[RMDB]
RNA sequence: GGGAACGACUCGAGUAGAGUCGAAAAGAUAUGGAACCCUGUAGGGAGCCUAUCCAUCGGAAACGAUGGUAAGGGCAUCGAUCUACGGGUUCCUAAGUCAAAAGGGACACUGUUCGCAGUGUCCCAAGAUGUGAAGGAACUUCGGUUCCUUCACAUCAAAAGAAACAACAACAACAAC
Reactivity to 2A3 in 0.01 (KOAc 150mM, MgCl2 10mM, bicine 150mM(pH8.5), 24C), signal-to-noise 2, nucleotides 027 to 126: g000a000u000a000u050g000g000a000a000c020c010c030u090g010u010a000g010g030g020a010g000c000c000u040a030u110c010c000a000u020c000g000g010a010a000a000c020g000a010u010g020g020u040a140a250g080g020g000c010a020u300c020g010a010u000c000u010a000c000g010g030g030u000u000c000c000u000a020a000g000u000c010a000a100a110a160g000g000g010a000c010a010c000u020g060u120u170c270g050c170a010g010u010g010u010c010c000c020a010a000
Reactivity to DMS in 0.01 (KOAc 150mM, MgCl2 10mM, bicine 150mM(pH8.5), 24C), signal-to-noise 2, nucleotides 027 to 126: g000a000u000a020u010g000g000a020a000c000c000c010u020g040u000a010g000g000g050a010g050c000c000u000a270u000c000c010a010u010c000g000g010a030a010a030c000g020a010u000g000g020u010a060a060g050g030g040c010a300u000c190g010a010u020c000u000a010c000g010g000g000u000u000c000c000u000a000a040g000u000c010a090a100a120a140g010g000g010a010c000a010c000u010g000u000u020c240g040c010a000g010u000g000u010c000c000c000a000a030